[RMDB]
The data come from the RNA Mapping Database (RMDB), library M2PK50. This 177-nucleotide RNA was probed chemically with DMS and 2A3. Values cover nucleotides 27 to 126. The RNA was probed in 150 mM KOAc, 10 mM MgCl2 and 150 mM bicine (pH 8.5) at 24 C. The 2A3 profile rests on 23,848 reads.
RNA sequence: GGGAACGACUCGAGUAGAGUCGAAAAAGACUUGUAUUCGUACAAGUCUACAGAAAUUUCGCUAGCACACGAUCUCACCUAGCGUUCUCAAUAACGAUCGAACAACGUGUCAAUUCGUUGACACGAAUAUUACCAAUCAGUUCGCUGAUUGGUAAUAAAAAGAAACAACAACAACAAC
Reactivity to DMS in 0.01 (KOAc 150mM, MgCl2 10mM, bicine 150mM(pH8.5), 24C), signal-to-noise 8, nucleotides 027 to 126: a020g000a010c000u000u010g010u000a010u000u010c160g030u000a010c000a000a010g010u000c000u000a090c210a110g010a080a100a130u000u000u000c000g010c000u000a010g000c160a150c170a080c020g010a020u000c010u000c130a070c170c010u000a000g000c000g010u000u000c000u000c010a090a040u010a040a050c300g010a020u000c020g010a140a110c260a060a170c010g000u000g000u000c000a010a040u000u000c180g000u000u000g000a000c000a000c010g000a050a050
Reactivity to 2A3 in 0.01 (KOAc 150mM, MgCl2 10mM, bicine 150mM(pH8.5), 24C), signal-to-noise 8, nucleotides 027 to 126: a000g000a000c000u000u000g010u010a020u040u100c230g020u030a000c010a000a000g000u000c000u000a000c010a040g230a050a180a090u040u040u020c010g000c010u010a000g020c060a030c020a020c120g020a030u000c040u020c050a100c050c000u000a000g000c000g010u010u000c010u000c000a020a070u160a070a040c060g020a020u040c020g050a060a030c040a030a050c030g000u000g000u010c010a020a030u050u050c180g060u080u020g000a000c000a000c000g000a020a010